[RMDB]
RNA sequence: GGGAACGACUCGAGUAGAGUCGAAAAGAUAUGGAGACCGAAGCUCGAUAAGAUGGUAUCGGAAACGAUACUCAUCUUUUGACGAGCUAGGUCUCCUAAGUCAAACCCCGAUGUUCGCAUCGGGGAAGUGUACUCAAAUCUUCGGAUUUGAGUACACAAAAGAAACAACAACAACAAC
Reactivity to 2A3 in 0.01 (KOAc 150mM, MgCl2 10mM, bicine 150mM(pH8.5), 24C), signal-to-noise 2, nucleotides 027 to 126: g020a020u070a030u140g020g020a010g000a020c010c020g090a160a020g010c010u000c020g140a120u040a280a000g010a010u000g000g000u000a010u010c020g000g000a070a030a020c010g000a010u000a000c020u030c130a010u020c000u000u010u030u080g110a090c030g000a000g000c000u000a000g010g000u000c010u000c000c000u000a000a000g000u000c000a030a030a250c000c000c000c000g010a010u010g040u100u160c300g000c220a020u010c000g000g000g020g000a010a100
Reactivity to DMS in 0.01 (KOAc 150mM, MgCl2 10mM, bicine 150mM(pH8.5), 24C), signal-to-noise 1, nucleotides 027 to 126: g000a020u000a210u010g020g020a000g000a010c000c000g000a250a160g010c000u000c000g030a110u020a010a000g020a020u020g010g040u000a000u000c010g000g000a030a030a130c000g000a020u000a000c000u030c000a000u000c000u000u000u010u010g000a170c170g000a000g030c000u000a100g000g000u000c000u010c000c010u010a000a060g000u010c020a170a150a170c020c000c000c000g030a000u000g010u020u010c260g000c000a010u000c000g000g000g000g030a000a010

Notes: This 177-nucleotide RNA was probed chemically with 2A3 and DMS. The 2A3 profile rests on 3,670 reads. 2A3 adducts were read by reverse transcription with SuperScript II with manganese.